Annotation:
An RNA of 177 nucleotides, treated with DMS and 2A3 and read out base by base. Source: RMDB library OK1LIB, as collected in RNAgym. As a SHAPE reagent, 2A3 marks flexible, mostly unpaired nucleotides at the ribose 2'-OH. The reactions ran in a buffer of 150 mM KOAc, 10 mM MgCl2 and 150 mM bicine (pH 8.5), at 24 C.
RNA sequence: GGGAACGACUCGAGUAGAGUCGAAAACAGUUCUCCAAGACGGACGGAGCUUUCGAGUUUCGUGCUACGGCACGUCUCUCGGAGAGCCAAGACAAAUCCAAGUCAAAAACCAACAAACCAAAUAAAACCGUAUACAUACGUUCGCGUAUGUAUGCGGAAAAGAAACAACAACAACAAC
Reactivity to DMS in 0.01 (KOAc 150mM, MgCl2 10mM, bicine 150mM(pH8.5), 24C), signal-to-noise 4, nucleotides 027 to 126: c130a250g000u000u000c000u010c010c030a090a110g020a060c110g010g020a060c060g000g030a160g010c020u000u020u040c000g000a010g010u000u000u000c000g070u010g030c000u010a040c200g030g000c010a000c000g030u000c020u000c000u000c030g000g000a000g000a010g010c020c010a170a070g000a130c140a040a070a080u020c050c030a130a120g000u010c010a070a060a070a050a140c140c130a090a100c300a080a100a100c130c070a050a110a060u010a050a060a050a110
Reactivity to 2A3 in 0.01 (KOAc 150mM, MgCl2 10mM, bicine 150mM(pH8.5), 24C), signal-to-noise 9, nucleotides 027 to 126: c040a030g020u010u010c090u000c020c010a060a060g050a030c050g030g010a010c040g030g040a080g030c000u010u030u050c010g010a010g010u000u010u010c010g000u010g000c000u020a050c190g130g000c010a000c000g000u000c000u000c000u010c020g020g010a060g020a000g010c000c020a060a030g080a040c060a020a090a010u020c030c010a070a010g020u020c030a020a030a040a060a080c070c050a030a110c060a100a110a040c070c070a100a090a040u250a050a120a030a030